[RMDB]
RNA sequence: GGGAACGACUCGAGUAGAGUCGAAAAUUCUCCAAGGAUCGUUCCAUGAUCUACAUCGAGCACACGUACGAGUGUCCCAUUUUCCAGACCAAGGCCGACGAGUGCGGAACAUUCUUCACGCAACGGAGUGAGGCAUAUCGUUCGCGAUAUGCCUCACAAAAGAAACAACAACAACAAC
Reactivity to DMS in 0.01 (KOAc 150mM, MgCl2 10mM, bicine 150mM(pH8.5), 24C), signal-to-noise 2, nucleotides 027 to 126: u000u000c000u000c000c110a110a150g000g000a040u000c060g000u000u040c000c030a140u000g000a000u000c100u020a090c140a080u010c020g000a140g010c060a080c080a110c060g010u000a110c140g010a030g050u000g020u000c010c020c040a180u010u000u000u010c050c050a020g050a140c070c040a060a110g000g000c040c030g030a090c100g000a090g020u010g010c020g020g050a030a050c070a110u000u000c060u000u000c070a180c000g020c190a050a120c100g010g020a170
Reactivity to 2A3 in 0.01 (KOAc 150mM, MgCl2 10mM, bicine 150mM(pH8.5), 24C), signal-to-noise 1, nucleotides 027 to 126: u040u000c020u000c020c010a040a020g030g030a050u010c100g020u030u000c010c010a040u150g010a080u050c010u050a070c060a140u110c010g040a030g010c080a030c020a000c030g000u120a100c040g010a040g090u080g020u020c000c010c000a020u070u050u040u070c040c030a030g010a070c020c020a110a020g060g000c050c010g000a050c060g000a040g050u040g000c000g030g010a050a010c020a030u130u030c000u050u020c050a080c050g070c050a030a090c060g020g020a080
Chemical mapping of a 177-nucleotide RNA with DMS and 2A3. High DMS reactivity at an A or C suggests that its Watson-Crick edge is free. The reactions ran in a buffer of 150 mM KOAc, 10 mM MgCl2 and 150 mM bicine (pH 8.5), at 24 C. Reactivities are given for positions 27 through 126.